[RMDB]
An RNA of 177 nucleotides, treated with 2A3 and DMS and read out base by base. For DMS the reverse transcriptase was MarathonRT. High 2A3 reactivity points to a flexible backbone, as in loops and unpaired stretches. Conditions: 150 mM KOAc, 10 mM MgCl2 and 150 mM bicine (pH 8.5), 24 C.

RNA sequence: GGGAACGACUCGAGUAGAGUCGAAAAAAUGUUCUGUUCGCAGAACAUUAAGCUGGUGUCCCGACCAGGCUGGAUGUCAGUACACGAAGUGCCAGUUCGGGAAUGCCUCCGGCUUCGGCCGGAGGAACAUUAGCGUCUAGUUCGCUAGACGCUAAUGAAAAGAAACAACAACAACAAC
Reactivity to 2A3 in 0.01 (KOAc 150mM, MgCl2 10mM, bicine 150mM(pH8.5), 24C), signal-to-noise 4, nucleotides 027 to 126: a000a000u030g000u020u000c020u010g020u030u060c300g010c090a000g000a000a010c000a000u000u010a050a020g080c010u030g000g030u030g030u020c010c000c010g000a010c010c010a030g070g050c010u010g000g040a140u160g070u250c080a080g130u200a100c110a030c160g120a160a030g040u040g170c000c010a020g010u050u040c020g030g000g030a020a030u080g070c000c000u010c000c000g000g000c010u050u080c170g080g000c000c000g000g000a000g000g000a000a000
Reactivity to DMS in 0.01 (KOAc 150mM, MgCl2 10mM, bicine 150mM(pH8.5), 24C), signal-to-noise 5, nucleotides 027 to 126: a030a010u000g000u000u000c000u000g010u000u010c190g000c010a000g010a010a000c000a000u000u000a050a120g010c040u000g000g010u000g000u000c010c000c010g000a110c020c010a030g010g010c040u000g000g010a110u020g010u010c080a120g010u010a090c140a100c090g010a080a100g010u010g010c020c020a060g010u000u000c040g000g010g000a090a070u010g010c000c000u000c000c000g000g010c000u000u010c210g010g010c000c000g000g000a010g000g010a030a060
2A3 adducts were read by reverse transcription with SuperScript II with manganese. For 2A3, 6,395 sequencing reads were counted.